[RMDB]
RNA sequence: GGGAACGACUCGAGUAGAGUCGAAAAUGCUUGCUCCUCCUUUUAUUUCCAUAGGAAUAGGCUUAGUUUUACAAACGUUACUCCACAGUAGCAUCGGAAAGUGGAAGAAUUUUUUAGACUCUCAAAAGAGUCUUGAAAUGUUCGCAUUUCAAGACUCAAAAGAAACAACAACAACAAC
Reactivity to DMS in 0.01 (KOAc 150mM, MgCl2 10mM, bicine 150mM(pH8.5), 24C), signal-to-noise 1, nucleotides 027 to 126: u010g010c040u000u030g000c120u000c030c040u010c070c030u000u010u000u020a080u000u010u000c040c020a150u010a070g040g010a080a060u000a060g010g030c040u000u000a090g020u000u020u000u000a110c140a040a050a050c080g020u010u000a060c040u010c010c020a030c060a130g010u020a080g050c130a030u000c110g000g000a080a090a140g020u000g010g040a060a070g010a060a020u020u010u000u000u000u000a140g000a060c010u000c010u000c090a090a070a070a130
Chemical mapping of a 177-nucleotide RNA with DMS.
Conditions: 150 mM KOAc, 10 mM MgCl2 and 150 mM bicine (pH 8.5), 24 C.
For DMS the reverse transcriptase was MarathonRT.
The data come from the RNA Mapping Database (RMDB), library OK2TST.
Reactivities are given for positions 27 through 126.
For DMS, 889 sequencing reads were counted.